[RMDB]
RNA sequence: GGGAACGACUCGAGUAGAGUCGAAAACUUAGAUCCACCUUUGUGGAUGGGUCUUGGACUGAGUUCUACCUGUAAACUUCUUGUUUCUUGUGGUUCCAGUCCAAGAAACGUCCAGCAACUUUGUUGGUCACAUAGUCCGAUUCGUCGGACUAUGUGAAAAAGAAACAACAACAACAAC
Reactivity to 2A3 in 0.01 (KOAc 150mM, MgCl2 10mM, bicine 150mM(pH8.5), 24C), signal-to-noise 5, nucleotides 027 to 126: c030u110u100a040g060a120u100c010c020a090c050c070u060u070u100g060u050g010g000a010u000g010g000g020u010c000u000u000g000g000a000c000u000g000a010g050u000u000c000u010a010c000c000u040g290u300a010a000a010c020u150u160c050u280u300g000u000u010u000c000u000u010g000u000g010g000u000u000c010c010a010g010u000c000c010a000a000g010a000a010a000c000g030u000c000c000a030g050c000a010a070c030u080u090u060g040u010u030g040g040
Reactivity to DMS in 0.01 (KOAc 150mM, MgCl2 10mM, bicine 150mM(pH8.5), 24C), signal-to-noise 2, nucleotides 027 to 126: c120u010u020a080g000a060u020c010c030a050c080c220u010u030u040g000u000g040g020a010u030g000g000g000u010c010u010u010g010g000a040c000u000g000a130g000u000u000c020u000a010c000c000u000g000u030a020a000a000c010u030u050c290u040u040g020u000u000u000c030u010u010g030u000g000g000u010u000c000c000a030g000u010c010c000a020a020g030a000a010a020c010g020u000c000c020a010g030c060a080a080c300u030u000u000g010u000u000g000g000